[RMDB]
RNA sequence: GGGAACGACUCGAGUAGAGUCGAAAAAUGACUUAAAGUCUGCACGGGAAGGAGCCUACCCCCAUGUUCCUGGCUAGCCAAGGAACCACCAGUUGAUUAGCAGAGAAGGGCAGCCAGUCUAGCUAGAACCUACUAAGGUGUUCGCACCUUAGUAGGUAAAAGAAACAACAACAACAAC
Reactivity to DMS in 0.01 (KOAc 150mM, MgCl2 10mM, bicine 150mM(pH8.5), 24C), signal-to-noise 4, nucleotides 027 to 126: a080u010g010a030c040u020u040a080a120a100g010u020c000u010g000c050a050c040g000g000g020a120a070g000g000a120g020c050c000u010a160c080c010c000c000c030a080u010g000u020u000c020c000u010g000g020c010u020a060g000c030c030a090a100g000g000a070a070c050c190a090c020c030a090g000u020u020g030a130u020u000a060g010c050a080g000a070g010a090a070g010g000g010c000a070g000c020c020a090g010u010c070u010a070g000c040u000a070g020a150
Reactivity to 2A3 in 0.01 (KOAc 150mM, MgCl2 10mM, bicine 150mM(pH8.5), 24C), signal-to-noise 4, nucleotides 027 to 126: a000u080g000a020c040u110u130a230a030a040g030u000c010u060g030c040a000c040g010g010g000a100a020g080g030a020g020c000c010u030a040c040c000c000c010c000a030u100g020u020u020c000c000u000g010g000c020u060a040g010c010c010a040a040g020g020a060a050c010c000a070c020c030a040g040u070u080g140a170u140u120a020g090c040a010g010a000g000a240a060g030g000g000c000a010g020c000c000a000g010u010c040u050a020g010c010u010a020g040a080
The data come from the RNA Mapping Database (RMDB), library OK1LIB. Structure probing data (DMS and 2A3) for a 177-nucleotide construct. The RNA was probed in 150 mM KOAc, 10 mM MgCl2 and 150 mM bicine (pH 8.5) at 24 C. DMS (dimethyl sulfate) methylates the pairing face of unpaired adenines and cytosines. DMS adducts were read by reverse transcription with MarathonRT. The 2A3 profile rests on 2,877 reads.